Structure probing data (2A3 and DMS) for a 177-nucleotide construct. Conditions: 150 mM KOAc, 10 mM MgCl2 and 150 mM bicine (pH 8.5), 24 C. For DMS the reverse transcriptase was MarathonRT. The data come from the RNA Mapping Database (RMDB), library OK1LIB.
RNA sequence: GGGAACGACUCGAGUAGAGUCGAAAACUUCAUCCAAGCCUGCCAGGGCGAUCGCUUGGACGGAGGCAUCACUCUGGAGAAGGGCGUUACCGAGACGGACGGGGAGUCCUCGACGAGCUACAAGAUAGCAGCUAGGAUUAUUCGUAAUCCUAGCUGCAAAAGAAACAACAACAACAAC
Reactivity to 2A3 in 0.01 (KOAc 150mM, MgCl2 10mM, bicine 150mM(pH8.5), 24C), signal-to-noise 4, nucleotides 027 to 126: c010u090u040c020a070u000c010c040a060a000g040c000c000u070g030c000c030a070g070g020g030c010g040a050u050c060g000c040u010u060g060g060a110c030g050g020a020g010g010c000a000u040c000a000c010u020c000u020g070g010a140g070a130a080g050g010g010c020g040u040u110a070c020c000g020a020g020a060c090g040g020a010c010g010g000g030g050a070g060u070c000c010u030c010g040a030c020g000a010g070c040u100a080c090a100a000g050a150u140a070
Reactivity to DMS in 0.01 (KOAc 150mM, MgCl2 10mM, bicine 150mM(pH8.5), 24C), signal-to-noise 2, nucleotides 027 to 126: c010u000u000c060a100u020c040c030a100a090g000c070c030u030g050c000c040a100g020g000g000c070g020a010u030c170g000c000u000u020g000g050a050c160g080g000a040g000g030c070a080u000c010a000c040u000c010u050g010g020a070g000a230a120g000g000g020c000g000u010u000a040c050c010g000a070g000a060c050g000g020a070c090g000g030g000g020a170g000u040c010c120u010c080g000a070c070g000a040g000c030u020a070c070a010a190g040a060u040a070